[RMDB]
RNA sequence: GGGAACGACUCGAGUAGAGUCGAAAAGAUAUGGAUAUCACUUAGGGAGAUCUCCGUCGGAAACGACGGAAGAUCUUUGAUCUAACAUGUGAUAUCCUAAGUCAAAAGCCAGAGUUCGCUCUGGCAAGAGCCUAAUAUGGUUCGCCAUAUUAGGCUCAAAAGAAACAACAACAACAAC
Reactivity to DMS in 0.01 (KOAc 150mM, MgCl2 10mM, bicine 150mM(pH8.5), 24C), signal-to-noise 2, nucleotides 027 to 126: g000a060u000a300u030g000g000a020u000a000u000c000a000c000u000u000a050g000g010g000a030g010a010u010c000u000c000c000g040u030c010g000g010a130a150a230c000g030a010c020g010g000a000a020g010a000u000c000u000u000u010g000a090u010c020u000a050a070c300a110u010g000u010g030a030u010a010u000c000c000u000a000a110g010u000c020a130a090a120a250g010c000c000a000g000a050g020u010u000c300g000c000u000c010u000g000g030c030a010a030
Reactivity to 2A3 in 0.01 (KOAc 150mM, MgCl2 10mM, bicine 150mM(pH8.5), 24C), signal-to-noise 1, nucleotides 027 to 126: g000a010u080a020u170g030g000a000u000a010u000c010a030c030u060u070a100g090g030g000a080g060a010u000c000u000c000c000g020u000c030g020g000a110a060a000c010g010a000c020g000g020a030a020g000a000u000c000u020u070u070g010a010u000c020u070a060a070c030a270u190g000u030g020a000u010a000u000c000c000u000a040a000g060u040c000a000a030a100a170g000c020c000a000g010a020g000u090u190c260g010c140u010c020u050g000g010c000a000a030
An RNA of 177 nucleotides, treated with DMS and 2A3 and read out base by base. The reactions ran in a buffer of 150 mM KOAc, 10 mM MgCl2 and 150 mM bicine (pH 8.5), at 24 C. For 2A3 the reverse transcriptase was SuperScript II with manganese. Reactivities are given for positions 27 through 126. For DMS, 2,099 sequencing reads were counted.